[RMDB]
RNA sequence: GGGAACGACUCGAGUAGAGUCGAAAAGCGGCCUCAUACGUGAGGCCGCAAGUACGAAAGUACAAAGGAGCAAAAGCAUGAGCUCCUAAAAAUCAUGCAAAAACACUGGUCAUACGUGACCAGUGAACGCGGUAUGGGUAUUCGUACCCAUACCGCGAAAAGAAACAACAACAACAAC
Reactivity to 2A3 in 0.01 (KOAc 150mM, MgCl2 10mM, bicine 150mM(pH8.5), 24C), signal-to-noise 2, nucleotides 027 to 126: g000c000g000g040c010c020u000c010a010u010a050c300g130u030g000a020g000g000c000c000g000c000a000a000g000u000a000c020g060a030a030a080g020u000a000c030a020a230a030g000g000a000g040c060a030a080a250a000g000c000a000u020g000a000g010c000u000c000c020u120a030a000a000a000a000u010c000a000u000g000c020a100a000a000a000a000c000a000c000u010g000g000u000c000a020u020a150c300g120u010g000a000c000c000a010g020u000g000a000a000
Structure probing data (2A3) for a 177-nucleotide construct. The reactions ran in a buffer of 150 mM KOAc, 10 mM MgCl2 and 150 mM bicine (pH 8.5), at 24 C.